[RMDB]
RNA sequence: GGGAACGACUCGAGUAGAGUCGAAAAAUGCGCUGCCGCAAGUUCGGCGUAGAAGUUCAGGUUGCUGCGCUCGCUGCCUUCGUUGACGUGACGUAGUGCGUUGGCGACAACGGCCGGAGUCACCGUCAGUCAUACAUAUCUUCGGAUAUGUAUGACUAAAAGAAACAACAACAACAAC
Reactivity to 2A3 in 0.01 (KOAc 150mM, MgCl2 10mM, bicine 150mM(pH8.5), 24C), signal-to-noise 8, nucleotides 027 to 126: a000u090g000c020g000c030u050g030c020c020g060c100a070a040g050u100u120c030g020g000c020g010u030a050g040a200a020g030u110u140c060a040g030g080u070u060g040c020u040g020c010g000c020u010c030g030c010u050g010c010c000u060u080c050g070u040u080g030a050c030g020u040g020a020c060g080u100a050g060u080g140c010g000u020u020g020g000c020g020a040c020a040a020c020g090g000c010c010g080g110a040g020u040c020a010c050c010g050u040c040
Reactivity to DMS in 0.01 (KOAc 150mM, MgCl2 10mM, bicine 150mM(pH8.5), 24C), signal-to-noise 9, nucleotides 027 to 126: a090u010g010c020g010c040u000g010c300c040g020c120a080a090g010u010u010c030g010g010c020g020u000a040g010a100a080g010u000u000c070a060g010g010u000u000g010c030u000g010c050g010c040u000c060g000c030u000g010c060c040u000u000c060g020u000u000g010a030c040g020u000g000a040c060g010u010a150g010u000g010c010g010u000u000g000g010c220g000a130c070a020a030c030g010g010c050c030g000g010a260g000u000c040a050c050c060g010u010c070